[RMDB]
RNA sequence: GGGAACGACUCGAGUAGAGUCGAAAAUAUAAUCGUACGUACGUACGUAUAGCCGGCAUGCAUAUCGCGUAGCUAGCCGGCGCGCGCUAUAGCUACGCGGCAUGCAUGCCGAUCGCGCGUAUACGCGACAUAGAGAGCAAUUCGUUGCUCUCUAUGUAAAAGAAACAACAACAACAAC
Reactivity to DMS in 0.01 (KOAc 150mM, MgCl2 10mM, bicine 150mM(pH8.5), 24C), signal-to-noise 9, nucleotides 027 to 126: u010a080u010a100a110u010c010g010u000a070c060g010u010a060c160g020u000a010c000g010u010a080u000a110g020c180c020g010g000c000a020u000g000c000a020u000a020u000c010g010c000g010u000a010g010c000u000a040g010c090c080g010g010c100g010c120g020c130g010c040u000a110u010a030g010c010u000a010c010g010c000g000g000c070a010u000g000c010a010u000g000c000c000g000a000u000c030g010c010g010c030g010u000a060u000a210c050g010c020g000
Reactivity to 2A3 in 0.01 (KOAc 150mM, MgCl2 10mM, bicine 150mM(pH8.5), 24C), signal-to-noise 9, nucleotides 027 to 126: u190a010u050a030a150u090c020g010u030a020c070g030u030a020c080g000u010a000c020g050u030a050u130a140g120c060c000g000g000c000a000u010g000c000a000u010a000u020c010g000c000g010u000a000g000c010u000a010g040c030c040g190g010c010g010c030g000c010g000c010u160a130u050a130g000c000u000a000c000g000c000g000g000c000a000u010g000c000a000u000g000c000c000g000a000u000c010g000c000g000c000g010u060a040u020a090c130g000c000g010

Structure probing data (DMS and 2A3) for a 177-nucleotide construct. It was measured as part of the RMDB library OK2TRN. 2A3 adducts were read by reverse transcription with SuperScript II with manganese.